Structure probing data (DMS) for a 177-nucleotide construct.
The DMS profile rests on 3,823 reads.
The data come from the RNA Mapping Database (RMDB), library OK1LIB.

RNA sequence: GGGAACGACUCGAGUAGAGUCGAAAAAUCUUACAGCGAUUUGCCGUUUAGAUACAAUGGUUACAGUUGUUGAUGCUAACCGCUUCGUACAUGACAUCAACUCAGAAGAUUUAUUGAUGGAUCGUGACAGGAGGAAGGAAUUCGUUCCUUCCUCCUGAAAAGAAACAACAACAACAAC
Reactivity to DMS in 0.01 (KOAc 150mM, MgCl2 10mM, bicine 150mM(pH8.5), 24C), signal-to-noise 3, nucleotides 027 to 126: a030u010c010u020u010a060c130a100g000c070g020a110u030u050u020g000c030c020g020u000u000u000a060g020a050u020a070c100a080a030u010g000g000u000u040a080c080a110g060u010u010g000u010u000g000a070u000g020c110u030a060a100c070c100g020c050u020u000c100g010u030a050c030a080u010g010a070c060a070u020c040a000a030c140u030c100a060g020a100a090g000a090u010u030u030a080u020u000g000a110u010g040g030a110u000c040g020u000g020a300
Annotation:
Reactivities are given for positions 27 through 126.